[RMDB]
RNA sequence: GGGAACGACUCGAGUAGAGUCGAAAAGCAAAAAUAUGCCUCAAUGAUUGAGCCAGGCUACCAACCACCUCCGGAUGAUUAUAUAUAAGAAUUACUACUCAAAAAAUCUUUUUUAUAAUAAAAGCUCACAAUGCUCAGUAUUCGUACUGAGCAUUGUAAAAGAAACAACAACAACAAC
Reactivity to 2A3 in 0.01 (KOAc 150mM, MgCl2 10mM, bicine 150mM(pH8.5), 24C), signal-to-noise 1, nucleotides 027 to 126: g040c020a060a060a000a000a000u040a040u220g000c000c000u110c020a090a050u130g040a080u010u130g010a000g000c000c010a010g090g000c000u010a050c000c000a010a000c030c000a030c000c000u020c020c040g000g060a060u030g010a020u110u080a030u010a030u040a010u020a190a030g010a140a080u220u040a030c000u020a010c000u010c010a160a050a050a120a140a270u160c190u170u110u150u000u000u010a200u000a080a070u120a100a130a000a010g010c010u010c030
Structure probing data (2A3) for a 177-nucleotide construct. For 2A3, 379 sequencing reads were counted. It was measured as part of the RMDB library RFM100.